[RMDB]
RNA sequence: GGGAACGACUCGAGUAGAGUCGAAAAUGGUGAUCAUACGGUAACUCUCUGUCUAACUGUUUGAGGAACUGCCAGGCUGCUAUCCAUAUUUCUGUUCUAUUUCACAUUCCCACUUGCAGUGUGUGAGGAUUUGAUUUUCUCUAUAUCCUCACCAAUACUCAGGGUCCUAUUUCGAUAGGACCCUGAGAAAAGAAACAACAACAACAAC
Reactivity to 2A3 in 0.01 (KOAc 150mM, MgCl2 10mM, bicine 150mM(pH8.5), 24C), signal-to-noise 2, nucleotides 027 to 156: u110g020g010u040g050a050u090c050a050u020a070c050g020g010u050a070a080c030u030c000u050c030u050g090u080c000u100a160a060c080u100g040u150u010u070g030a070g000g040a090a030c030u040g000c000c020a070g020g060c050u010g010c000u000a010u010c000c020a020u010a190u090u100u030c030u020g060u040u050c100u110a110u100u110u040c080a060c000a020u040u000c020c000c010a030c040u050u090g010c080a120g020u030g010u030g000u000g130a000g000g000a000u030u050u070g030a040u040u050u240u030c100u000c000u050a070u030a000u100c000c000u000c000a000c010c000a010a010u020a070
Chemical mapping of a 207-nucleotide RNA with 2A3. 2A3 adducts were read by reverse transcription with SuperScript II with manganese.